[RMDB]
RNA sequence: GGGAACGACUCGAGUAGAGUCGAAAAGAUAUGGACGUAGUUUCCUUGAGCGUCACUUCGGAAACGAAGUAGACGCAAUGAUGGGAAGGUUCGAAGUCCUAAGUCAAAACCGCAGUUCGCUGCGGAAGUUGAAGUAUGGGUUCGCCCAUACUUCAACAAAAGAAACAACAACAACAAC
Reactivity to 2A3 in 0.01 (KOAc 150mM, MgCl2 10mM, bicine 150mM(pH8.5), 24C), signal-to-noise 4, nucleotides 027 to 126: g000a010u030a010u040g000g020a010c060g090u240a080g170u090u020u020c010c000u030u030g020a000g000c000g010u000c000a000c000u000u010c000g000g020a010a020a010c030g020a020a010g030u080a210g000a000c000g000c000a040a290u020g000a000u010g010g010g060a040a030g120g150u300u300c270g110a200a040g010u000c000c010u000a010a000g000u000c010a000a000a080a180c000c000g000c000a000g000u070u270c300g020c170u010g000c010g010g040a010a030
Reactivity to DMS in 0.01 (KOAc 150mM, MgCl2 10mM, bicine 150mM(pH8.5), 24C), signal-to-noise 3, nucleotides 027 to 126: g000a010u000a040u010g000g010a020c010g030u010a160g010u000u000u000c010c000u010u000g010a070g030c000g010u010c000a030c000u000u000c000g010g010a020a030a050c010g020a020a020g020u000a120g030a010c010g020c000a050a040u010g010a100u000g000g000g000a030a010g010g060u000u000c180g020a110a180g000u000c000c000u000a010a150g000u010c000a070a060a140a140c000c000g020c000a020g000u020u010c300g020c010u000g010c000g020g000a010a020
An RNA of 177 nucleotides, treated with 2A3 and DMS and read out base by base. The RNA was probed in 150 mM KOAc, 10 mM MgCl2 and 150 mM bicine (pH 8.5) at 24 C. For DMS, 3,697 sequencing reads were counted. DMS adducts were read by reverse transcription with MarathonRT.